An RNA of 177 nucleotides, treated with 2A3 and DMS and read out base by base. It was measured as part of the RMDB library OK2TRN. Conditions: 150 mM KOAc, 10 mM MgCl2 and 150 mM bicine (pH 8.5), 24 C.

[RMDB]
RNA sequence: GGGAACGACUCGAGUAGAGUCGAAAAUGGAAUCUGAGCACCACAAGGGGUCAAGGUUCCUAAUCCUGACCUUACGAGCCCUAUAAUGCAACUUUGAGUAUCUGUUCGGUAGAAGUGCGAGGAAUAAAUCGUUUAAUACAUUCGUGUAUUAAACGAUAAAAGAAACAACAACAACAAC
Reactivity to 2A3 in 0.01 (KOAc 150mM, MgCl2 10mM, bicine 150mM(pH8.5), 24C), signal-to-noise 9, nucleotides 027 to 126: u090g010g020a020a010u010c010u030g020a020g050c050a060c080c010a080c160a240a170g090g000g010g010u040c030a050a040g010g000u020u050c010c000u020a010a030u030c000c000u020g070a050c010c000u030u080a050c050g030a020g050c000c010c010u060a070u100a130a080u130g020c020a050a080c060u090u090u140g060a060g040u050a060u060c050u050g100u100u070c030g030g010u040a030g020a150a010g010u030g060c050g020a020g030g070a070a040u110a120a190
Reactivity to DMS in 0.01 (KOAc 150mM, MgCl2 10mM, bicine 150mM(pH8.5), 24C), signal-to-noise 9, nucleotides 027 to 126: u010g000g010a040a020u000c010u000g010a300g010c070a050c010c020a130c300a110a160g010g010g010g010u000c050a120a030g010g010u000u000c030c030u000a060a090u000c010c010u000g010a060c050c030u000u000a070c100g010a110g010c020c020c030u000a070u010a080a080u000g010c050a050a070c110u000u000u000g000a110g010u000a040u000c050u000g010u000u000c080g010g000u000a090g010a060a060g010u000g010c050g010a100g010g000a090a080u010a050a080